[RMDB]
RNA sequence: GGGAACGACUCGAGUAGAGUCGAAAAUUGUCUCCAUAGUUUUGCCUUUUCCAGAAUGUCAUGGAGUUGGAAUCACACAAGUUUGUAGCCCUUUCAGAUUGGCUUCUUAGUCAGUUUUCUGUUGCUUAUAGCAGACUACCUGAAACUGGGUGAUUCAAUUUAGUAUUUACUUCGGUAAAUACUAAAUAAAAGAAACAACAACAACAAC
Reactivity to 2A3 in 0.01 (KOAc 150mM, MgCl2 10mM, bicine 150mM(pH8.5), 24C), signal-to-noise 2, nucleotides 027 to 156: u060u090g060u020c010u000c010c000a030u030a100g050u040u090u120u110g080c020c050u150u250u080u120c030c010a060g030a210a070u090g080u190c030a030u020g070g000a020g030u030u060g090g010a010a000u010c000a000c000a010c010a130a090g020u020u060u090g030u080a030g010c030c000c000u060u200u170c080a110g030a270u060u020g010g000c000u090u020c010u030u150a050g040u010c000a020g000u000u020u070u010c010u010g040u030u020g060c090u170u180a130u180a220g000c000a000g000a010c000u030a040c030c020u020g020a000a030a010c010u010g040g000g000u000g000a000u000u000c000a000
Reactivity to DMS in 0.01 (KOAc 150mM, MgCl2 10mM, bicine 150mM(pH8.5), 24C), signal-to-noise 3, nucleotides 027 to 156: u000u000g020u010c000u000c000c020a050u000a140g000u000u010u000u010g020c050c080u000u000u000u000c040c010a100g000a080a050u000g010u000c130a060u010g000g010a070g020u010u010g020g000a040a020u000c010a030c010a060c040a060a090g010u000u000u000g030u000a070g020c010c000c060u010u000u000c060a090g010a070u000u000g020g000c000u000u000c110u000u000a030g040u000c010a050g020u000u000u000u000c030u010g030u000u010g010c030u000u010a130u010a110g030c020a080g000a020c020u000a030c030c240u010g010a050a020a030c020u000g010g030g070u000g010a030u000u000c010a100
Chemical mapping of a 207-nucleotide RNA with 2A3 and DMS. For DMS, 10,204 sequencing reads were counted. 2A3 adducts were read by reverse transcription with SuperScript II with manganese.